[RMDB]
RNA sequence: GGGAACGACUCGAGUAGAGUCGAAAAACAGGUCGAUUCGUCGACCUGUACAUUGCGGCCGCGCGGGGUCGUUCCCGCGCGAAACCCGGCGCGGCCGCGCGCUUACAAACGGAUUCGUCCGUUUGAAACAGCCAUAAGUAUUCGUACUUAUGGCUGUAAAAGAAACAACAACAACAAC
Reactivity to DMS in 0.01 (KOAc 150mM, MgCl2 10mM, bicine 150mM(pH8.5), 24C), signal-to-noise 2, nucleotides 027 to 126: a020c000a010g010g010u000c000g010a020u000u000c200g020u000c000g000a010c000c000u000g000u010a030c150a100u010u010g010c010g000g010c000c010g000c040g050c010g000g010g020g000u010c030g010u000u000c020c020c010g010c070g000c090g010a020a090a070c040c020c020g030g000c010g010c000g010g010c000c000g000c000g020c190g010c120u000u000a210c010a000a010a020c000g000g000a030u000u000c190g010u000c000c000g020u000u000u000g010a070a130
Reactivity to 2A3 in 0.01 (KOAc 150mM, MgCl2 10mM, bicine 150mM(pH8.5), 24C), signal-to-noise 1, nucleotides 027 to 126: a000c000a010g010g010u010c000g000a010u030u090c130g040u010c000g090a020c000c000u010g000u000a000c010a040u070u240g020c000g000g010c010c010g070c020g030c060g070g040g000g000u020c010g000u010u010c000c020c020g000c060g000c010g060a050a010a030c010c050c010g130g030c040g020c010g020g030c090c010g030c000g010c030g000c010u160u160a090c010a000a000a000c010g000g030a010u040u050c060g050u010c010c020g000u010u000u000g000a010a010